[RMDB]
RNA sequence: GGGAACGACUCGAGUAGAGUCGAAAAAGUCAGUGGUCCGACUUACGAGUCGGACCCCUGACAUGGCAGCUGGAUCCAGCCAGGCGGUGUAUCGCCAAACCCAGCCAAUCAAUCUACCCACCGGGAAUACAGAAAGCGAACUUCGGUUCGCUUUCAACCUAGAAUACUGGUUCGCCAGUAUUCUAGGAAAAGAAACAACAACAACAAC
Reactivity to 2A3 in 0.01 (KOAc 150mM, MgCl2 10mM, bicine 150mM(pH8.5), 24C), signal-to-noise 1, nucleotides 027 to 156: a000g000u030c000a000g000u000g010g000u000c010c040g000a010c010u050u050a090c200g120a010g000u010c000g000g010a020c000c020c000c000u000g000a000c000a000u000g010g000c020a020g000c010u000g020g000a100u050c130c030a000g020c020c020a010g000g000c010g080g020u170g090u200a080u250c010g000c000c000a000a000a000c000c000c000a020g020c010c020a020a030u120c000a020a050u100c030u160a020c000c010c030a090c060c100g020g030g010a030a040u160a120c040a060g020a000a000a000g000c000g020a000a000c000u010u060c160g060g000u020u000c000g000c000u000u000u000c010a000a000